[RMDB]
RNA sequence: GGGAACGACUCGAGUAGAGUCGAAAACGAGGUGCGGUAGGCCUCGUUAACAAACCGCAAAAAAAUAGUCGCAAACGACGAAAAGUACGCACUCGCAGCUUAAUAACCUGCGCUGAGCCCUUCUCCCAAAACUGAGGUAGGUUCGCCUACCUCAGAAGUGAGAUAAACAGUUCGCUGUUUAUCUCACAAAAGAAACAACAACAACAAC
Reactivity to 2A3 in 0.01 (KOAc 150mM, MgCl2 10mM, bicine 150mM(pH8.5), 24C), signal-to-noise 5, nucleotides 027 to 156: c010g000a010g010g030u110g040c060g020g020u060a040g100g010c010c000u000c010g050u010u020a010a010c020a000a030a020c010c020g000c040a070a060a010a000a000a010a150u210a040g010u020c030g020c120a070a140a100c050g050a010c000g060a100a000a010a020g050u050a030c030g010c040a090c040u020c030g010c000a010g000c010u070u050a080a010u040a100a080c010c010u020g010c030g000c080u030g020a020g010c020c010c000u060u040c030u030c000c000c000a030a090a060a090c010u000g000a000g000g000u000a000g010g000u030u020c080g030c030c000u000a000c000c000u000c000a000g000a000a000
Reactivity to DMS in 0.01 (KOAc 150mM, MgCl2 10mM, bicine 150mM(pH8.5), 24C), signal-to-noise 2, nucleotides 027 to 156: c000g000a010g010g050u000g050c040g030g020u000a180g020g020c000c020u010c010g050u000u010a000a180c010a050a100a120c020c020g000c070a020a000a020a080a140a070a200u000a070g010u000c040g000c020a120a120a230c020g000a050c040g000a040a030a070a040g050u000a070c070g000c020a110c000u000c000g010c020a090g000c030u000u000a120a100u000a110a090c090c000u010g010c070g030c130u000g020a060g020c000c020c070u000u000c050u000c000c010c030a080a100a090a210c030u010g020a010g020g020u000a010g010g000u000u020c300g040c000c010u000a000c000c000u000c000a000g020a040a100